[RMDB]
RNA sequence: GGGAACGACUCGAGUAGAGUCGAAAAGAUAUGGACCGUCCAGUGAGUGAUGACCUACAUCGGAAACGAUGUAGCAAGCUCCUGGCGGUCCUAAGUCAAAGCGUAGAUAUGUUCGCAUAUCUACGCAGCAGUAUAAGAAGUUCGCUUCUUAUACUGCAAAAGAAACAACAACAACAAC
Reactivity to 2A3 in 0.01 (KOAc 150mM, MgCl2 10mM, bicine 150mM(pH8.5), 24C), signal-to-noise 9, nucleotides 027 to 126: g020a020u080a050u150g000g000a000c010c000g130u300c030c020a100g050u180g300a010g000u060g180a300u150g030a080c000c010u000a000c000a000u000c010g030g010a050a060a040c010g000a000u010g000u010a000g000c000a060a130g000c000u000c000c000u000g010g000c000g000g000u000c000c000u000a010a000g010u000c030a050a090a040g000c000g000u000a000g000a010u000a010u020g060u060u120c300g000c160a000u000a000u000c000u000a000c000g000c000a000
Reactivity to DMS in 0.01 (KOAc 150mM, MgCl2 10mM, bicine 150mM(pH8.5), 24C), signal-to-noise 9, nucleotides 027 to 126: g010a040u010a300u010g010g010a010c000c010g000u020c000c010a010g020u030g020a020g050u000g020a100u010g010a140c300c000u000a010c000a010u010c000g000g010a160a110a240c010g010a010u000g010u000a000g000c030a050a120g010c000u000c000c010u000g000g000c010g000g000u010c000c000u000a010a060g010u010c040a120a090a120g000c000g010u000a000g000a010u000a000u000g000u000u010c230g000c000a000u000a000u000c000u000a000c000g010c000a010